[RMDB]
RNA sequence: GGGAACGACUCGAGUAGAGUCGAAAAGGGGUCUGAUUCUCUAGCGUGUUUCGCAGAUAGUUUGGGAGGUCUGAAGCCUCCACGGACCGAAGAACAAACUGUAGAAAUCGGGAUCAGACGGAGGCACCCAAAAGAGGACUCGUUCGCGAGUCCUCAAGAAAGAUUCGUAGUUCGCUACGAAUCUUUCAAAAGAAACAACAACAACAAC
Reactivity to 2A3 in 0.01 (KOAc 150mM, MgCl2 10mM, bicine 150mM(pH8.5), 24C), signal-to-noise 1, nucleotides 027 to 156: g040g000g030g000u000c000u000g000a020u140u040c070u030c120u170a130g110c070g200u300g070u070u010u000c010g020c030a020g000a060u040a010g000u000u000u040g010g000g000a030g020g000u000c000u010g010a020a000g010c020c000u000c000c000a000c000g010g000a000c000c000g050a210a020g010a000a000c010a000a040a000c010u010g020u080a070g050a000a030a040u100c100g010g000g020a000u000c000a000g020a020c020g010g000a000g000g000c020a020c000c000c000a040a160a020a070g040a010g000g000a010c010u010c030g030u130u130c300g030c000g170a000g020u040c000c000u000c010a000a020

An RNA of 207 nucleotides, treated with 2A3 and read out base by base. Values are in units of 0.01, from 0 to 300, in steps of 10. Source: RMDB library RNAMAK, as collected in RNAgym. Conditions: 150 mM KOAc, 10 mM MgCl2 and 150 mM bicine (pH 8.5), 24 C.